[RMDB]
RNA sequence: GGGAACGACUCGAGUAGAGUCGAAAAGCAGGGAAAGCCGUGCAACUCGCGAACUCUCGCAAACUCACGCUGAGUGGCCAGGCCAGCGGCAGCGUUCAGUUCGAUGGCUCGAGCGACGUAACGAUAGAUGUCCAGCUCGCCGAUAGCCUCGCCCUGACAUGCAAGCCGAAUUCGUUCGGCUUGCAUGAAAAGAAACAACAACAACAAC
Reactivity to 2A3 in 0.01 (KOAc 150mM, MgCl2 10mM, bicine 150mM(pH8.5), 24C), signal-to-noise 1, nucleotides 027 to 156: g000c030a000g000g010g010a020a250a000g000c090c010g020u000g000c080a060a090c050u010c080g050c020g000a070a030c080u090c130u110c110g020c000a010a060a210c090u130c090a040c050g000c000u090g000a030g070u030g040g020c040c020a070g040g030c020c000a020g040c000g030g000c040a000g000c000g000u010u000c000a000g000u000u000c000g020a100u140g140g040c030u000c010g070a070g000c000g070a030c100g000u020a060a030c040g050a070u140a170g290a120u150g070u080c090c000a030g010c030u020c010g000c000c000g030a080u150a050g000c000c010u000c030g000c000c010c000u040g000a000